This 177-nucleotide RNA was probed chemically with 2A3 and DMS. Reactivities are given for positions 27 through 126. 2A3 adducts were read by reverse transcription with SuperScript II with manganese. The data come from the RNA Mapping Database (RMDB), library OK2TST. For DMS the reverse transcriptase was MarathonRT. Conditions: 150 mM KOAc, 10 mM MgCl2 and 150 mM bicine (pH 8.5), 24 C. For DMS, 22,201 sequencing reads were counted.
RNA sequence: GGGAACGACUCGAGUAGAGUCGAAAAUGCGUCGGGACAGUCUUUGCUAGUGUCGCUGUGGUUGGCGUUACACACUACUGGUGGGCACCUCGUUUGUUUAGGUUCACUCCUGCGGCAAACAAGAUGGCGAUUAAGUACUGUUCGCAGUACUUAAUCGAAAAGAAACAACAACAACAAC
Reactivity to 2A3 in 0.01 (KOAc 150mM, MgCl2 10mM, bicine 150mM(pH8.5), 24C), signal-to-noise 6, nucleotides 027 to 126: u110g000c020g010u010c020g020g030g030a050c020a030g020u030c030u040u150u110g030c040u070a070g040u020g020u100c020g000c050u040g030u070g070g120u050u120g040g010c020g020u090u130a050c070a000c010a010c030u120a030c030u070g030g010u050g010g020g020c030a030c000c010u030c030g030u000u030u060g060u010u040u090a040g020g010u070u150c030a040c110u040c020c000u030g030c060g020g000c010a020a030a030c010a000a050g100a070u130g100g050
Reactivity to DMS in 0.01 (KOAc 150mM, MgCl2 10mM, bicine 150mM(pH8.5), 24C), signal-to-noise 9, nucleotides 027 to 126: u000g010c040g020u000c040g010g010g000a080c060a070g000u010c050u000u000u000g020c070u010a080g020u000g010u000c060g020c050u000g020u010g010g010u010u010g010g010c070g010u000u000a090c120a070c070a080c070u000a070c100u010g020g020u000g000g010g010c050a060c030c020u000c060g010u000u000u000g010u000u000u010a060g010g010u000u000c210a110c130u000c020c000u000g010c130g010g000c030a040a030a050c070a060a080g000a090u010g010g010